[RMDB]
RNA sequence: GGGAACGACUCGAGUAGAGUCGAAAAAGUGCAUGCCAUACGUGGCAUGCACAAGCUUAAUGAUGACUGUUUUUUUUGAUUGCUUGAAGCAAUGUGAAAAACACAUUUCACCGGCUCUGAAAGCUAACGCAUUCACGCCAUUCGUGGCGUGAAUGCGAAAAGAAACAACAACAACAAC
Reactivity to 2A3 in 0.01 (KOAc 150mM, MgCl2 10mM, bicine 150mM(pH8.5), 24C), signal-to-noise 1, nucleotides 027 to 126: a000g000u000g000c010a000u000g000c000c000a030u070a090c300g100u000g000g000c000a000u000g010c080a000c000a010a000g000c000u090u270a130a000u060g090a010u000g170a070c060u080g010u000u000u000u000u000u000u000u170g230a050u060u000g000c000u220u170g240a140a000g070c000a000a010u130g030u000g080a000a000a000a000a000c070a000c000a230u000u000u000c010a000c200c000g000g000c080u200c000u300g020a160a000a000g140c050u060a160a000